[RMDB]
Structure probing data (2A3) for a 207-nucleotide construct. For 2A3 the reverse transcriptase was SuperScript II with manganese. The data come from the RNA Mapping Database (RMDB), library PDB130. The reactions ran in a buffer of 150 mM KOAc, 10 mM MgCl2 and 150 mM bicine (pH 8.5), at 24 C.
RNA sequence: GGGAACGACUCGAGUAGAGUCGAAAAGCGUAUGAACAAAUCAUACCAGAGGUGUCAGAAUAAUUACCACAGGGAUAACUGGCUUAUCCUUCGAUGUCGGCUCUUCCUAACCUAGCGGCUAAGGGUUGGAUUGUUCACCCACUGACAGGGAACGUGAGGUGUUAUGUACGUUCGCGUACAUAACACCAAAAGAAACAACAACAACAAC
Reactivity to 2A3 in 0.01 (KOAc 150mM, MgCl2 10mM, bicine 150mM(pH8.5), 24C), signal-to-noise 1, nucleotides 027 to 156: g060c050g000u000a020u020g020a090a060c070a150a120a120u020c000a010u000a000c010c000a000g010a020g060g010u060g010u040c060a060g050a070a180u190a060a040u220u170a080c070c000a040c160a100g110g000g020a040u000a070a020c020u090g140g000c040u090u040a040u090c000c000u030u050c040g060a060u050g080u040c020g000g010c040u020c010u040u020c000c000u070a080a080c000c000u010a040g000c000g020g000c010u070a120a070g070g000g000u000u000g010g050a080u060u040g020u000u010c010a090c000c040c000a050c040u010g050a030c060a030g080g040g000a090a030c080g030u060g090a040